RNA sequence: GGGAACGACUCGAGUAGAGUCGAAAAUUGUGGUCAAGACCUAGGCGUAGUAUCCAAGGUUGUCAAGGUUCCUAUUGACUUAACAAUGAUUGAGUUUAUGUUAUGGUGUAAGGAUGGACAGGGGAAACUAAAGGUACUCAUUCGUGAGUACCUUUAGAAAAGAAACAACAACAACAAC
Reactivity to 2A3 in 0.01 (KOAc 150mM, MgCl2 10mM, bicine 150mM(pH8.5), 24C), signal-to-noise 3, nucleotides 027 to 126: u010u020g000u040g040g000u040c020a030a000g020a060c000c000u010a020g020g010c060g040u050a030g060u030a090u090c030c020a060a020g060g040u040u060g030u070c030a020a010g050g000u050u110c000c020u020a100u010u090g010a010c000u040u040a080a010c020a040a150u110g050a200u100u110g060a060g150u020u110u040a120u120g100u090u090a090u110g060g010u060g030u100a040a090g060g030a060u060g030g020a010c030a030g020g010g010g010a000a040a000
Reactivity to DMS in 0.01 (KOAc 150mM, MgCl2 10mM, bicine 150mM(pH8.5), 24C), signal-to-noise 9, nucleotides 027 to 126: u000u010g030u000g020g000u000c040a060a070g000a060c030c010u000a100g010g010c140g010u000a110g010u010a090u000c030c050a110a060g010g020u000u000g000u010c060a060a060g010g000u000u000c040c060u000a100u000u010g000a020c020u000u000a050a040c040a060a060u000g000a120u000u000g000a100g000u000u000u000a040u010g000u000u000a070u010g010g010u010g010u010a070a070g000g010a080u000g000g000a060c060a070g000g000g010g000a110a060a190

Chemical mapping of a 177-nucleotide RNA with 2A3 and DMS. DMS adducts were read by reverse transcription with MarathonRT. The reactions ran in a buffer of 150 mM KOAc, 10 mM MgCl2 and 150 mM bicine (pH 8.5), at 24 C.